[RMDB]
RNA sequence: GGGAACGACUCGAGUAGAGUCGAAAAAAAAAGAGUUUCCUUUAACCAAUAUGGAAGCAAAGAUCAAGAAUACAACCUUCCUAUAUGGUUGACUUAAUUAUUCCCUAGGUUCCUGGAAGCUAAAAAAGAAGAACUAAUUGUUCGCAAUUAGUUCUUCAAAAGAAACAACAACAACAAC
Reactivity to DMS in 0.01 (KOAc 150mM, MgCl2 10mM, bicine 150mM(pH8.5), 24C), signal-to-noise 2, nucleotides 027 to 126: a030a010a090a060a090g000a060g060u000u000u010c020c010u000u000u000a010a010c010c020a050a070u000a080u010g020g010a030a000g000c100a150a120a110g010a080u000c100a070a110g010a100a080u000a040c040a150a260c300c000u000u020c030c020u020a020u000a120u000g010g010u000u000g000a010c040u000u000a050a070u010u000a110u000u000c010c010c010u010a240g010g000u000u000c160c070u000g020g020a050a020g000c020u000a000a040a040a070a040a120